Background: Source: RMDB library RFM100, as collected in RNAgym. An RNA of 177 nucleotides, treated with 2A3 and read out base by base. The RNA was probed in 150 mM KOAc, 10 mM MgCl2 and 150 mM bicine (pH 8.5) at 24 C. For 2A3, 684 sequencing reads were counted. Values cover nucleotides 27 to 126.
RNA sequence: GGGAACGACUCGAGUAGAGUCGAAAAUGAACUCUCUAGAGCCAUAAUUAGAGCAAACUAAUUGAAGUUGUGUUUUGACACACUUUCCAAAUUCACGGGUGCUGCAUGACAUAUUCACAACACUACUCGAGGGUAUACCGUUCGCGGUAUACCCUCGAAAAGAAACAACAACAACAAC
Reactivity to 2A3 in 0.01 (KOAc 150mM, MgCl2 10mM, bicine 150mM(pH8.5), 24C), signal-to-noise 2, nucleotides 027 to 126: u160g000a000a050c000u000c000u010c010u060a070g000a120g020c000c000a070u010a270a010u060u010a010g000a010g080c060a190a000a000c000u040a070a020u100u010g140a110a030g060u090u040g010u000g020u010u020u090u190g100a000c000a000c000a000c000u060u030u060c000c000a040a190a170u120u110c020a000c050g170g020g000u010g000c140u000g050c120a000u080g030a050c000a030u120a180u130u100c010a000c000a040a030c000a020c050u150a040c050u020